[RMDB]
RNA sequence: GGGAACGACUCGAGUAGAGUCGAAAAUCUGUUGACAGGUAAUCGUAUAGUCGAAGUCGGACUACGGUUACAGCAACAGAGCAUAGACCGCGUCAAGUCCGACUUGGACUAUUCUGGGAUCUAUGGACUUCACCUGAGUAUUCGUACUUAGGUGAAGAAAAGAAACAACAACAACAAC
Reactivity to 2A3 in 0.01 (KOAc 150mM, MgCl2 10mM, bicine 150mM(pH8.5), 24C), signal-to-noise 9, nucleotides 027 to 126: u020c010u020g070u080u150g110a100c060a080g030g060u070a050a080u080c030g000u030a030u030a050g020u020c110g180a050a010g030u040c020g010g000a010c010u010a020c020g000g010u010u060a030c020a030g000c000a020a120c060a120g140a020g000c000a030u070a050g040a020c020c000g050c070g160u100c140a090a010g000u000c000c000g000a030c010u020u060g070g000a000c000u000a020u040u020c060u120g030g020g040a020u010c020u050a140u130g070g040a030
Reactivity to DMS in 0.01 (KOAc 150mM, MgCl2 10mM, bicine 150mM(pH8.5), 24C), signal-to-noise 9, nucleotides 027 to 126: u000c030u000g010u000u010g010a120c100a060g010g010u000a040a120u000c120g010u000a030u000a020g010u000c000g010a040a040g010u000c040g010g000a020c000u000a100c010g000g000u000u000a090c300a110g000c010a080a090c200a120g010a130g010c020a070u000a200g010a020c010c000g010c160g000u000c230a110a030g010u000c000c000g000a040c050u000u000g000g010a010c000u000a020u000u000c030u000g020g010g000a070u000c030u000a090u010g010g000a280
An RNA of 177 nucleotides, treated with 2A3 and DMS and read out base by base. Reactivities are given for positions 27 through 126. For 2A3, 44,202 sequencing reads were counted. The data come from the RNA Mapping Database (RMDB), library OK2TRN. Conditions: 150 mM KOAc, 10 mM MgCl2 and 150 mM bicine (pH 8.5), 24 C.